Structure probing data (DMS) for a 177-nucleotide construct.

RNA sequence: GGGAACGACUCGAGUAGAGUCGAAAAGAUAUGGAUGUAGGCGCGAAACUCCCUCCAUCGGAAACGAUGGAAGGAGGAGCCUAAUCCUAAGUCAAAACAUAGAGGGAUGUUCGCAUCCCUCUAUGAAGUACUACACCCGGUUCGCCGGGUGUAGUACAAAAGAAACAACAACAACAAC
Reactivity to DMS in 0.01 (KOAc 150mM, MgCl2 10mM, bicine 150mM(pH8.5), 24C), signal-to-noise 1, nucleotides 027 to 126: g020a010u000a190u010g000g000a030u000g010u030a010g020g040c000g000c130g020a060a090a140c000u010c000c000c020u000c000c000a010u020c000g000g000a030a040a080c010g020a010u000g000g000a000a030g000g000a010g010g020a110g040c000c000u000a030a050u010c010c000u000a050a220g000u010c050a100a130a140a230c000a000u000a010g010a000g010g010g000a030u020g000u020u010c120g000c000a050u000c000c000c000u000c000u000a000u000g000a060a120

Background:
The RNA was probed in 150 mM KOAc, 10 mM MgCl2 and 150 mM bicine (pH 8.5) at 24 C. The DMS profile rests on 989 reads. It was measured as part of the RMDB library TTRDEL.